An RNA of 207 nucleotides, treated with DMS and 2A3 and read out base by base. The reactions ran in a buffer of 150 mM KOAc, 10 mM MgCl2 and 150 mM bicine (pH 8.5), at 24 C. For 2A3 the reverse transcriptase was SuperScript II with manganese. For DMS the reverse transcriptase was MarathonRT.

RNA sequence: GGGAACGACUCGAGUAGAGUCGAAAAAUACUUCUCAGGAUGGCGCGUUGCAGUCCAACAAGAUCCAGGGACAGUACAGAAUUUUCCUAUACCUCGAGUCGGGUUUGGAAUCUAAGGUUGACUCGCUAAAACUUUACGUGGUUCGCCACGUAAAGAAGACUUGUUAGAACUUCGGUUCUAACAAGUCAAAAGAAACAACAACAACAAC
Reactivity to DMS in 0.01 (KOAc 150mM, MgCl2 10mM, bicine 150mM(pH8.5), 24C), signal-to-noise 1, nucleotides 027 to 156: a110u000a000c020u000u010c020u000c010a150g020g030a040u030g000g030c300g020c080g010u030u010g000c010a190g010u000c080c030a090a030c060a100a300g000a040u000c010c000a070g000g000g030a050c080a000g000u010a030c050a120g030a080a070u000u000u000u000c040c010u000a100u010a070c090c030u000c020g010a040g050u010c020g020g020g030u000u000u000g010g000a090a060u010c060u020a050a060g000g000u000u000g000a020c030u010c000g000c100u000a050a100a070a150c000u000u000u000a000c010g040u000g040g040u000u000c300g030c000c000a010c000g000u000a000a000a000g000a060a150
Reactivity to 2A3 in 0.01 (KOAc 150mM, MgCl2 10mM, bicine 150mM(pH8.5), 24C), signal-to-noise 5, nucleotides 027 to 156: a000u040a010c000u020u020c010u020c010a000g020g010a030u060g060g190c060g020c070g160u040u080g030c090a060g090u090c080c000a020a010c030a020a080g050a080u020c010c010a030g020g000g010a020c090a060g020u050a020c030a050g120a240a180u010u020u030u000c010c000u030a040u050a060c010c030u020c050g020a010g000u030c020g010g000g000u050u080u050g040g030a060a040u050c070u110a150a130g130g020u070u110g040a020c010u020c030g030c040u060a080a060a030a060c000u000u000u000a000c000g000u000g020g020u030u030c080g050c060c000a000c000g010u000a000a000a000g000a020a000